An RNA of 177 nucleotides, treated with DMS and read out base by base. For DMS the reverse transcriptase was MarathonRT.
[RMDB]
RNA sequence: GGGAACGACUCGAGUAGAGUCGAAAAAAGGUGCCAUCAUAUCGGUUAAGAACUCUUAACUCUGUUGGCUUUCGAGUUAUGUGGUGCAUUGAAGCUCUCCCUUCAAAUGGUCGUACAGUUCCGUGAAGGCAUUCUAUACCUUCGGGUAUAGAAUGCCAAAAGAAACAACAACAACAAC
Reactivity to DMS in 0.01 (KOAc 150mM, MgCl2 10mM, bicine 150mM(pH8.5), 24C), signal-to-noise 1, nucleotides 027 to 126: a030a040g000g010u010g010c000c000a070u000c020a060u010a060u000c130g020g010u030u000a040a040g030a210a090c300u010c030u000u000a060a040c010u020c080u000g010u010u000g000g000c060u000u000u000c040g010a070g000u000u000a030u000g020u000g050g010u000g000c050a020u000u000g000a100a080g020c090u000c040u000c060c050c010u010u000c080a060a010a170u020g010g000u000c030g030u000a050c110a060g000u000u000c020c010g010u010g000a070a070
The reactions ran in a buffer of 150 mM KOAc, 10 mM MgCl2 and 150 mM bicine (pH 8.5), at 24 C. Source: RMDB library M2PK90, as collected in RNAgym.